This 177-nucleotide RNA was probed chemically with 2A3 and DMS. For DMS, 917 sequencing reads were counted.

[RMDB]
RNA sequence: GGGAACGACUCGAGUAGAGUCGAAAAGUUAUCUGGCGAUUGCUAACUACGAAGAUCGCUUUGUGGUGCCGAGUAGUCAUCGUGAACUGGCACGGGAAGCCUUCCCGGAGAAAAAUGGCUGCGGCUAGCCGAUAGUGCAUUUCGAUGCACUAUCGGCAAAAGAAACAACAACAACAAC
Reactivity to 2A3 in 0.01 (KOAc 150mM, MgCl2 10mM, bicine 150mM(pH8.5), 24C), signal-to-noise 1, nucleotides 027 to 126: g040u000u060a100u210c080u070g030g030c000g040a050u080u050g100c050u080a190a060c070u050a040c130g060a100a010g040a050u050c030g020c220u000u020u010g090u070g060g000u070g030c030c010g060a050g040u090a010g010u010c000a020u070c020g070u110g060a030a090c050u110g040g010c030a040c030g020g000g000a130a040g080c000c000u000u060c000c030c050g060g000a170g030a000a070a040a010a040u040g030g000c020u050g000c100g060g020c030u050a060
Reactivity to DMS in 0.01 (KOAc 150mM, MgCl2 10mM, bicine 150mM(pH8.5), 24C), signal-to-noise 1, nucleotides 027 to 126: g020u000u000a040u000c070u010g010g010c010g020a030u010u000g000c030u010a120a050c050u010a050c030g030a150a100g000a110u000c200g000c020u000u000u000g010u000g000g020u000g000c110c070g000a090g020u000a040g000u010c050a030u010c080g000u000g030a060a130c090u020g010g010c060a150c030g000g030g010a030a040g030c050c090u030u000c020c000c020g020g000a220g010a080a010a020a080a180u010g010g010c020u000g000c150g000g000c070u000a140
For 2A3, 638 sequencing reads were counted. Conditions: 150 mM KOAc, 10 mM MgCl2 and 150 mM bicine (pH 8.5), 24 C. For 2A3 the reverse transcriptase was SuperScript II with manganese.